Structure probing data (2A3 and DMS) for a 207-nucleotide construct. The RNA was probed in 150 mM KOAc, 10 mM MgCl2 and 150 mM bicine (pH 8.5) at 24 C. The 2A3 profile rests on 5,808 reads.
[RMDB]
RNA sequence: GGGAACGACUCGAGUAGAGUCGAAAAGCGGGGCUUGAAACGCGGGUAGCGCGCACGCCCGACGAAGAAGUUCGCAUACGCGGUGUGCUGGUGCCGAAGUGUCUGCUGCAACGGCACGCUCGACACCUAGAACAUACCGUAUUCGUACGGUAUGUAAGUUACAUCAUUUGUUCGCAAAUGAUGUAACAAAAGAAACAACAACAACAAC
Reactivity to 2A3 in 0.01 (KOAc 150mM, MgCl2 10mM, bicine 150mM(pH8.5), 24C), signal-to-noise 5, nucleotides 027 to 156: g030c030g000g020g040g000c020u070u070g060a090a090a040c050g020c020g000g020g060u120a070g060c050g000c010g010c100a020c040g010c000c010c010g030a060c010g000a010a050g050a030a020g090u060u080c020g000c040a030u060a210c080g020c080g040g030u010g010u020g050c050u070g010g020u010g000c000c010g010a060a040g040u040g050u090c080u120g090c060u090g020c040a050a030c030g000g000c000a000c010g030c040u030c020g020a020c000a010c000c010u050a050g040a080a000c010a000u000a000c000c000g010u010a000u000u030c080g040u020a000c000g000g000u000a000u000g000u020a020a030
Reactivity to DMS in 0.01 (KOAc 150mM, MgCl2 10mM, bicine 150mM(pH8.5), 24C), signal-to-noise 3, nucleotides 027 to 156: g010c020g020g000g030g020c040u010u000g000a110a080a070c040g010c020g000g000g050u010a120g030c010g020c020g040c030a080c080g010c010c020c000g030a050c010g000a090a140g010a120a170g020u000u000c020g010c050a120u000a130c060g010c060g030g010u000g030u000g010c050u000g000g030u000g020c010c010g000a020a110g030u000g010u010c070u010g040c050u020g000c120a140a190c130g000g000c000a010c010g010c080u000c000g000a060c000a010c000c010u000a130g010a140a060c000a020u000a000c000c000g020u000a040u010u000c260g000u000a010c020g000g010u010a010u000g010u010a010a090